[RMDB]
RNA sequence: GGGAACGACUCGAGUAGAGUCGAAAAGGUAGUAUUCAGAUCUGUCCUGUGUGUGCACGCCACCUAGUGGUCAAUCUGUGACCUUGGUAGUGAUCUGUGCUACUUAGGAUCAAGGCCAUACAUGUGUAGUCCAGGAGUGAGCCCUGUAGUUCAUAAAUAAUAUCAUCCGAUUCGUCGGAUGAUAUUAAAAAGAAACAACAACAACAAC
Reactivity to DMS in 0.01 (KOAc 150mM, MgCl2 10mM, bicine 150mM(pH8.5), 24C), signal-to-noise 3, nucleotides 027 to 156: g020g010u000a060g030u000a060u010u000c020a080g020a070u010c030u000g000u020c020c040u010g020u000g030u010g010u010g030c020a100c060g000c030c010a040c030c080u010a130g050u000g040g030u020c050a040a120u010c110u010g030u000g010a040c010c020u000u000g000g050u000a040g030u010g010a050u000c050u000g040u000g070c010u000a010c040u000u000a070g030g000a100u000c030a060a150g010g010c020c020a120u000a060c060a080u000g040u010g020u000a060g000u000c030c020a110g000g010a110g000u010g000a090g010c040c030c010u010g000u000a110g010u000u000c020a060u010a040a080a200
Reactivity to 2A3 in 0.01 (KOAc 150mM, MgCl2 10mM, bicine 150mM(pH8.5), 24C), signal-to-noise 4, nucleotides 027 to 156: g060g030u060a010g010u010a120u060u160c050a050g030a070u000c020u070g090u050c050c010u070g040u050g000u010g020u060g100c030a010c080g070c010c010a040c010c110u040a040g070u040g040g000u000c020a040a140u080c100u150g190u080g060a030c000c000u010u020g040g000u030a090g030u030g080a100u080c080u130g100u100g000c000u010a020c000u030u040a040g000g030a060u040c030a060a060g000g000c000c010a030u070a070c070a100u150g030u010g020u050a060g060u030c030c040a010g000g010a030g050u100g030a030g030c010c010c010u030g050u060a050g020u010u040c040a040u120a230a080a040